[RMDB]
RNA sequence: GGGAACGACUCGAGUAGAGUCGAAAACAGCUGUCUUUAUGGUAGCAGUUGUAGCAUUCCUCUGUGGGAAAGAAACUGUUACACAAUUUAAUGCCUCUUUCUUAGCCACACAGGAGGAGGAUUAUGUCCACUUAUGACGGUUCGCCGUCAUAAGUGGAAAAGAAACAACAACAACAAC
Reactivity to 2A3 in 0.01 (KOAc 150mM, MgCl2 10mM, bicine 150mM(pH8.5), 24C), signal-to-noise 1, nucleotides 027 to 126: c010a010g080c050u130g040u270c050u080u170u060a100u250g100g000u000a000g000c010a000g000u000u020g080u070a020g000c040a060u020u010c040c000u010c210u130g160u300g010g040g060a000a010a050g050a030a030a000c030u020g020u050u050a040c100a000c000a070a150u060u070u300a130a030u220g140c000c000u000c000u000u020u030c010u000u010a030g050c000c010a030c010a030c000a020g010g020a000g030g010a000g000g000a010u080u040a110u030g020u000
Chemical mapping of a 177-nucleotide RNA with 2A3. It was measured as part of the RMDB library RFMREP. The RNA was probed in 150 mM KOAc, 10 mM MgCl2 and 150 mM bicine (pH 8.5) at 24 C.